The record gives the reactivity of an RNA of 170 nucleotides to DMS and 2A3. The data come from the RNA Mapping Database (RMDB), library 15KLIB. For DMS the reverse transcriptase was MarathonRT.
RNA sequence: GGGAACGACUCGAGUAGAGUCGAAAAGGAAAGAAGAACUCGGACGCGAACCGUGAGUGGAACCCUGAUCCUUUAUUGGGGAGUACACUCGAGGAGUGGAAGGCGUUGUUGGGGGGGAGAUGGGCUUGAGACACGUUCUUCGGAACGUGUAAAAGAAACAACAACAACAAC
Reactivity to DMS in 0.01 (KOAc 150mM, MgCl2 10mM, bicine 150mM(pH8.5), 24C), signal-to-noise 8, nucleotides 027 to 129: g040g020a020a060a020g030a000a000g000a070a110c110u040c050g030g010a110c110g040c070g040a120a140c060c080g040u040g020a000g040u030g030g000a130a140c040c010c020u020g020a060u000c260c170u060u060u030a000u070u030g000g000g000g000a090g020u040a150c040a060c020u010c020g000a080g040g000a080g040u050g020g010a110a060g010g040c120g000u060u020g040u050u030g010g000g010g020g010g000g010a040g000a090u000g020g040g000c140u040u020g000a130g030
Reactivity to 2A3 in 0.01 (KOAc 150mM, MgCl2 10mM, bicine 150mM(pH8.5), 24C), signal-to-noise 2, nucleotides 027 to 129: g050g000a060a030a000g010a010a000g000a020a040c030u030c090g000g020a020c010g020c050g040a060a060c020c020g050u100g030a050g010u010g040g010a080a070c000c000c030u020g040a030u170c080c110u140u170u220a050u070u050g000g000g000g000a020g050u070a000c030a000c000u030c000g030a030g010g020a040g020u140g010g020a060a010g020g000c010g020u050u050g020u070u080g020g000g000g000g010g000g000a030g020a030u080g000g010g030c010u030u070g020a010g030
For DMS, 24,810 sequencing reads were counted. Conditions: 150 mM KOAc, 10 mM MgCl2 and 150 mM bicine (pH 8.5), 24 C. 2A3 adducts were read by reverse transcription with SuperScript II with manganese.